About this RNA:
Structure probing data (DMS and 2A3) for a 177-nucleotide construct. It was measured as part of the RMDB library M2PK90. The 2A3 profile rests on 6,044 reads. For DMS, 4,997 sequencing reads were counted.

[RMDB]
RNA sequence: GGGAACGACUCGAGUAGAGUCGAAAAUCAUUGGCUUCGCUGCGCGCUGCGUUGCCUAGGCUUGAGAUGCUUCGUACUGUUGCCAACGUUGCAAUUUCCAAACGCUAAUGCGAAAGUGUGCAAACAAAACUCUGGUAAAGUUCGCUUUACCAGAGUUAAAAGAAACAACAACAACAAC
Reactivity to DMS in 0.01 (KOAc 150mM, MgCl2 10mM, bicine 150mM(pH8.5), 24C), signal-to-noise 5, nucleotides 027 to 126: u000c070a100u010u010g000g000c020u000u000c040g020c030u000g010c030g000c060g030c050u000g010c040g010u010u000g010c020c020u010a110g010g010c050u000u010g000a100g020a110u010g010c020u010u010c040g030u010a070c120u010g000u000u000g010c040c030a080a070c090g010u000u000g020c050a060a080u000u000u000c030c050a070a040a150c090g010c030u000a080a100u010g030c030g010a080a060a080g020u000g000u010g010c070a100a080a110c150a060a060
Reactivity to 2A3 in 0.01 (KOAc 150mM, MgCl2 10mM, bicine 150mM(pH8.5), 24C), signal-to-noise 4, nucleotides 027 to 126: u110c020a020u040u100g010g000c000u020u010c020g040c090u090g000c030g000c000g010c020u040g010c000g060u020u010g000c010c000u020a070g020g000c050u030u090g040a050g010a100u050g030c000u040u030c020g020u040a080c050u100g120u220u080g070c060c010a040a010c050g040u050u040g000c020a080a140u000u030u050c020c000a060a060a010c040g000c030u120a160a010u200g020c050g100a120a030a050g050u050g020u010g000c020a050a050a040c020a020a190